[RMDB]
RNA sequence: GGGAACGACUCGAGUAGAGUCGAAAAGUGCACGACUUCGGUCGUGCACAAAUAAAGGCAGUCGAGUGCGUACGGCAGAGUCAUACGCUGACGCCACGACAAAAAGUAACGUCUUCGGACGUUACAACGGACAACUAAUCUUCGGAUUAGUUGUCCGAAAAGAAACAACAACAACAAC
Reactivity to DMS in 0.01 (KOAc 150mM, MgCl2 10mM, bicine 150mM(pH8.5), 24C), signal-to-noise 1, nucleotides 027 to 126: g010u000g040c000a040c000g000a010c000u000u000c170g030g000u000c000g040u000g010c030a000c020a000a020a060u020a060a150a110g030g000c110a080g000u000c000g010a130g030u030g010c000g040u000a060c030g010g010c040a110g000a150g000u000c140a100u000a120c000g030c000u000g000a040c010g030c000c000a140c040g010a020c020a010a030a030a120a170g000u000a000a030c020g010u010c000u000u000c240g000g000a010c000g000u000u000a000c000a040a110
Reactivity to 2A3 in 0.01 (KOAc 150mM, MgCl2 10mM, bicine 150mM(pH8.5), 24C), signal-to-noise 2, nucleotides 027 to 126: g000u010g040c000a010c000g050a030c040u030u120c300g040g000u000c010g000u000g000c000a000c000a000a000a000u030a000a010a000g160g000c040a010g010u010c020g050a030g050u240g030c020g010u000a300c040g030g040c050a080g030a030g300u140c040a050u070a170c060g020c040u020g010a000c010g000c020c000a020c000g040a010c040a000a130a010a000a020g010u010a000a020c000g000u010c010u030u080c160g080g000a010c000g000u010u000a000c000a000a020